[RMDB]
RNA sequence: GGGAACGACUCGAGUAGAGUCGAAAAAAGAUAUGGAUCCAUCGGAAUGAUGUAGGGAGAGAUGAAGAAUCGGAAACGAUUCUUCCGCUCUCGACGAUCUACAUAGGUACAUGGAUCCUAAGUCAAAGACGCAAUUAGGGUUCGCCCUAAUUGCGUCAAAAGAAACAACAACAACAAC
Reactivity to DMS in 0.01 (KOAc 150mM, MgCl2 10mM, bicine 150mM(pH8.5), 24C), signal-to-noise 1, nucleotides 027 to 126: a050a120g000a040u000a300u010g000g010a000u000c000c020a020u020c300g040g010a200a260u000g000a010u000g000u040a030g000g000g040a000g010a020g030a100u020g000a030a030g000a020a000u000c020g020g000a130a050a080c000g000a000u010u000c000u010u010c000c300g020c160u000c000u010c020g000a120c160g020a070u010c000u000a000c020a000u000a000g010g050u010a300c080a080u000g000g000a000u000c000c000u000a020a080g000u000c040a090a090a110